[RMDB]
RNA sequence: GGGAACGACUCGAGUAGAGUCGAAAAUCGUCAGCGCGUGCGCAUUGGCACCAUCGAUCCUCUCUAUGAUCCGGGGCUUGCUCGUGUACACGUGCCCGGACAAUUGGGGCAAGGGCCUACCACCACGAGAGGUGGACAAGUUCGCUUGUCCACCUCUAAAAGAAACAACAACAACAAC
Reactivity to 2A3 in 0.01 (KOAc 150mM, MgCl2 10mM, bicine 150mM(pH8.5), 24C), signal-to-noise 1, nucleotides 027 to 126: u080c000g060u060c060a050g030c040g030c000g110u070g000c060g010c040a060u040u020g000g000c040a080c090c010a120u120c050g000a130u050c000c020u000c020u080c010u080a120u280g100a120u100c050c000g000g030g000g000c130u070u140g020c050u080c080g080u060g040u100a000c030a010c170g060u060g150c000c000c030g000g010a000c000a050a040u060u080g050g000g000g040c030a050a080g100g100g070c010c020u050a020c020c030a040c010c020a040c040g140
Reactivity to DMS in 0.01 (KOAc 150mM, MgCl2 10mM, bicine 150mM(pH8.5), 24C), signal-to-noise 1, nucleotides 027 to 126: u000c020g070u000c080a120g040c060g120c080g060u000g030c020g050c060a080u000u000g010g020c010a080c020c010a060u010c210g000a120u010c010c080u000c110u000c120u000a170u010g000a090u010c000c030g000g000g000g000c100u010u000g000c040u010c100g000u010g010u000a150c020a060c060g000u000g010c000c090c010g000g000a000c010a060a040u000u010g000g020g050g030c150a110a110g050g010g000c010c000u000a070c040c020a080c090c030a070c190g000
The record gives the reactivity of an RNA of 177 nucleotides to 2A3 and DMS.
The DMS profile rests on 885 reads.
Conditions: 150 mM KOAc, 10 mM MgCl2 and 150 mM bicine (pH 8.5), 24 C.
For 2A3 the reverse transcriptase was SuperScript II with manganese.